Structure probing data (2A3 and DMS) for a 207-nucleotide construct. For DMS the reverse transcriptase was MarathonRT. The DMS profile rests on 2,183 reads. Conditions: 150 mM KOAc, 10 mM MgCl2 and 150 mM bicine (pH 8.5), 24 C.

[RMDB]
RNA sequence: GGGAACGACUCGAGUAGAGUCGAAAAGCCCAGCUGCCAAUAGACUGCCUGCCCGUGGCGGUCUUGCGGUAUCAACAUUACGGGAUACGCUUGCCUAUCACACCUGAAUAAGCGAGAAGAGACUAACAGGUUAGCCGUGGCUGUUUGGCCCUGUCAUCCAGAAAUAAUUCUUCGGAAUUAUUUCUGGAAAAGAAACAACAACAACAAC
Reactivity to 2A3 in 0.01 (KOAc 150mM, MgCl2 10mM, bicine 150mM(pH8.5), 24C), signal-to-noise 4, nucleotides 027 to 156: g020c010c000c010a020g090c090u160g030c010c010a030a010u010a020g000a010c000u000g020c000c010u050g020c020c000c020g020u010g000g000c010g000g000u010c000u000u010g000c010g000g040u010a100u060c060a010a210c010a060u090u150a010c010g000g030g000a010u000a030c040g010c030u030u030g020c000c010u060a040u050c020a060c000a040c130c030u030g010a070a030u050a070a020g010c020g020a010g010a050a000g010a010g100a070c060u130a110a020c060a020g050g000u040u080a030g020c030c040g080u100g040g000c030u030g080u110u110u180g030g000c020c000c000u030g070u060c020a050u000
Reactivity to DMS in 0.01 (KOAc 150mM, MgCl2 10mM, bicine 150mM(pH8.5), 24C), signal-to-noise 1, nucleotides 027 to 156: g040c000c000c030a210g020c230u010g030c000c020a070a300u000a050g020a000c000u000g010c010c020u000g030c030c000c000g030u000g020g020c010g000g000u000c000u000u000g000c300g000g070u000a040u020c090a060a110c040a100u000u000a030c030g020g010g010a060u000a170c020g020c010u000u000g000c010c020u000a050u000c000a050c080a070c090c040u030g010a110a070u000a040a010g010c020g000a070g020a100a070g000a300g020a110c090u040a040a180c040a050g020g000u010u000a080g040c070c050g040u000g020g010c010u000g000u000u000u010g000g000c030c000c020u000g000u000c090a240u000